[RMDB]
RNA sequence: GGGAACGACUCGAGUAGAGUCGAAAACUUUGACCUCUGACCUAUUCGGAUAUACACAAACGCAAUGGAUGUCAGUUCAAAACAGAUCUCUGGACAUAAAGAGAACGAAUCAUGGAUACACCUGAUUUGCAUCCUUGCAGGAUGUGGUCACCAGCCAUACGCUGCUGAUGUUCGCAUCAGCAGCGUAAAAAGAAACAACAACAACAAC
Reactivity to 2A3 in 0.01 (KOAc 150mM, MgCl2 10mM, bicine 150mM(pH8.5), 24C), signal-to-noise 2, nucleotides 027 to 156: c040u230u030u170g090a120c000c000u020c090u080g040a070c010c000u020a170u060u070c030g000g050a050u070a010u070a270c070a000c030a090a120a100c030g000c050a060a040u210g000g000a000u050g010u090c110a070g020u080u160c060a060a100a150a120c040a020g090a140u030c100u040c000u100g060g080a070c040a130u150a090a150a010g130a000g000a040a080c030g080a000a030u050c070a080u130g050g030a180u210a270c000a070c030c010u030g000a030u070u000u000g000c000a020u000c020c000u000u020g000c000a010g020g020a030u040g090u070g170g000u020c000a030c080c020a000g090c080c000a070